[RMDB]
RNA sequence: GGGAACGACUCGAGUAGAGUCGAAAAGGUUUUGCCAGAUCAUGACCUCUUCUAACACCGCGUCGGUAAUGGUGCUGAUCGUAUCUGGGCUCAUAUCCACCCCGAGGGUGGUGGCGAGGUGGUGCUGUAAACGUCUUACCUUCGGGUAAGACGUUUAAAAAGAAACAACAACAACAAC
Reactivity to DMS in 0.01 (KOAc 150mM, MgCl2 10mM, bicine 150mM(pH8.5), 24C), signal-to-noise 2, nucleotides 027 to 126: g000g000u020u000u010u000g010c110c070a070g000a060u010c050a060u000g000a030c020c030u000c090u000u000c070u010a070a120c070a060c050c020g000c110g000u000c070g030g020u000a080a080u020g020g010u000g050c090u020g000a070u000c090g000u020a170u000c050u000g030g000g010c060u000c080a080u000a090u000c010c000a040c030c000c010c070g020a100g000g020g050u000g000g020u000g000g030c130g010a070g000g000u000g000g030u000g030c140u030g010
This 177-nucleotide RNA was probed chemically with DMS.
Conditions: 150 mM KOAc, 10 mM MgCl2 and 150 mM bicine (pH 8.5), 24 C.
It was measured as part of the RMDB library OK2TRN.